[RMDB]
RNA sequence: GGGAACGACUCGAGUAGAGUCGAAAACUCGGUAUGCCAUGACCAGAGCGAAUCUAAAGGUAGAUGCUCCAUUGAGGCCUUAGAGCAGGUGGUACAUGGCUGUAGUCAGAUUGUACUGCGAGCCGAAAAUUAAAUCUUUAUUCGUAAAGAUUUAAUUAAAAGAAACAACAACAACAAC
Reactivity to 2A3 in 0.01 (KOAc 150mM, MgCl2 10mM, bicine 150mM(pH8.5), 24C), signal-to-noise 8, nucleotides 027 to 126: c020u000c000g000g000u060a030u110g000c000c000a000u000g000a000c000c000a010g020a020g070c020g050a050a030u010c000u030a060a040a040g080g010u030a030g020a110u090g040c010u020c030c010a100u060u260g040a020g030g020c000c000u030u050a020g010a010g040c060a010g010g060u010g000g010u030a080c010a000u000g000g010c000u000g000u000a000g000u000c020a010g020a300u140u200g030u120a030c000u000g030c010g020a020g000c000c000g020a120a030
Reactivity to DMS in 0.01 (KOAc 150mM, MgCl2 10mM, bicine 150mM(pH8.5), 24C), signal-to-noise 9, nucleotides 027 to 126: c040u000c010g000g010u010a060u030g000c000c010a000u000g000a060c000c010a050g010a130g000c040g000a110a110u000c010u000a040a100a080g010g030u010a070g010a080u020g010c030u010c030c120a170u030u040g010a130g010g000c000c000u000u010a060g010a090g010c130a110g010g020u000g000g010u010a070c000a000u000g000g010c000u010g010u010a020g000u010c020a120g010a140u020u020g010u020a030c010u000g010c010g010a110g010c000c000g000a040a080